[RMDB]
RNA sequence: GGGAACGACUCGAGUAGAGUCGAAAAACAUGCUGGAUACGUCCAGCAUGAUACGCAUGAGGAUAGAGGAAGUCGUGUAGAAGCGACUGGUCGAGAAAUUCGCCAGUCGCCGGUACGCCGGCGACAAGAAACCUAAAAGUUUCGACUUUUAGGUUUCAAAAGAAACAACAACAACAAC
Reactivity to DMS in 0.01 (KOAc 150mM, MgCl2 10mM, bicine 150mM(pH8.5), 24C), signal-to-noise 5, nucleotides 027 to 126: a160c010a000u000g010c000u000g010g020a030u000a060c190g010u010c000c000a010g000c000a000u000g000a060u010a030c120g000c090a070u010g000a100g000g010a090u020a070g010a130g000g010a120a080g010u000c010g020u000g000u010a080g000a230a180g000c010g010a010c000u000g000g000u030c050g000a040g000a100a110a180u020u000c030g010c010c010a060g010u000c010g020c010c010g000g020u010a040c160g020c030c030g030g010c010g010a070c130a060a100
Reactivity to 2A3 in 0.01 (KOAc 150mM, MgCl2 10mM, bicine 150mM(pH8.5), 24C), signal-to-noise 8, nucleotides 027 to 126: a000c000a000u000g000c000u000g010g010a030u020a050c220g100u020c010c000a000g000c000a000u000g010a000u010a020c090g030c060a060u130g060a050g130g040a060u100a180g100a050g060g090a140a020g020u020c030g000u020g010u120a060g030a180a010g010c000g010a010c010u010g000g040u140c050g000a000g040a040a220a070u140u020c010g030c040c000a010g000u000c000g000c010c000g000g010u030a020c140g020c030c010g010g010c010g000a010c010a030a070
Notes:
An RNA of 177 nucleotides, treated with DMS and 2A3 and read out base by base. The data come from the RNA Mapping Database (RMDB), libraries RFM100 and RFMREP.